[RMDB]
RNA sequence: GGGAACGACUCGAGUAGAGUCGAAAAAGGAUCGUACCGUCUACGUACGCUAGGAGUGGUACCUAGUACUCUCGUACGAGUCUAGCAUGCAUGUGCCAUGCUAGAUGCUAGCUCGAUCGUCUAUCGGUCCGCUUCUAUUGUUCGCAAUAGAAGCGGAAAAAGAAACAACAACAACAAC
Reactivity to DMS in 0.01 (KOAc 150mM, MgCl2 10mM, bicine 150mM(pH8.5), 24C), signal-to-noise 4, nucleotides 027 to 126: a070g000g000a020u000c090g010u000a020c050c030g000u010c040u020a070c070g000u000a040c050g010c300u010a050g010g000a040g010u010g020g010u000a030c040c080u030a140g010u000a040c040u000c020u010c030g010u000a020c040g020a190g010u000c000u000a010g000c000a010u000g010c020a300u000g010u000g010c150c000a020u000g000c000u000a010g000a010u000g030c130u000a070g010c040u000c020g000a050u000c030g000u010c050u000a100u000c090g010g010
Reactivity to 2A3 in 0.01 (KOAc 150mM, MgCl2 10mM, bicine 150mM(pH8.5), 24C), signal-to-noise 3, nucleotides 027 to 126: a000g090g000a040u030c050g000u030a030c060c020g060u060c060u110a080c050g090u040a010c050g020c130u070a040g000g070a060g050u180g030g030u080a020c010c010u030a060g040u060a020c000u020c010u020c040g040u040a020c030g000a010g010u010c000u000a000g000c000a000u010g000c000a090u290g100u190g240c120c000a000u000g000c020u000a010g000a020u010g000c030u040a030g040c010u010c010g020a080u020c000g050u000c050u070a170u090c010g070g030

Conditions: 150 mM KOAc, 10 mM MgCl2 and 150 mM bicine (pH 8.5), 24 C.
Structure probing data (DMS and 2A3) for a 177-nucleotide construct.
DMS adducts were read by reverse transcription with MarathonRT.
For DMS, 4,215 sequencing reads were counted.
Values cover nucleotides 27 to 126.
The data come from the RNA Mapping Database (RMDB), library OK2TRN.